[RMDB]
RNA sequence: GGGAACGACUCGAGUAGAGUCGAAAAGAUAUGGACACCAAGCUUUUGACGAGCGAAGGGUCGGAAACGACCCUAAGCUCGAUAAGCUUGUUGUCCUAAGUCAAAUCAACAGCUUCGGCUGUUGAAAGUCAGGCUAUAGGUUCGCCUAUAGCCUGACAAAAGAAACAACAACAACAAC
Reactivity to 2A3 in 0.01 (KOAc 150mM, MgCl2 10mM, bicine 150mM(pH8.5), 24C), signal-to-noise 1, nucleotides 027 to 126: g000a020u040a020u100g000g000a000c000a000c000c010a000a000g050c040u120u130u240u280g300a290c170g010a000g030c010g000a020a010g050g000g000u020c000g010g010a010a040a000c010g000a000c020c010c000u020a020a010g000c000u020c000g000a000u010a000a000g000c000u040u010g000u010u000g010u000c000c010u000a050a010g000u010c010a000a020a270u050c020a000a010c000a000g050c000u070u140c260g190g060c000u010g010u030u000g020a010a000a000
Reactivity to DMS in 0.01 (KOAc 150mM, MgCl2 10mM, bicine 150mM(pH8.5), 24C), signal-to-noise 1, nucleotides 027 to 126: g000a020u000a230u030g000g000a050c000a010c020c000a010a070g000c000u020u000u000u000g010a110c150g010a000g010c000g000a300a090g010g020g030u010c000g000g000a030a050a090c010g010a000c020c000c000u010a010a250g030c000u010c000g000a030u000a010a010g010c000u000u000g000u000u000g020u000c010c000u000a000a140g000u000c020a080a150a170u000c000a020a000c000a020g030c000u010u020c230g010g010c000u000g000u000u000g000a010a030a110
The record gives the reactivity of an RNA of 177 nucleotides to 2A3 and DMS.
Source: RMDB library TTRDEL, as collected in RNAgym.
The 2A3 profile rests on 2,168 reads.
The RNA was probed in 150 mM KOAc, 10 mM MgCl2 and 150 mM bicine (pH 8.5) at 24 C.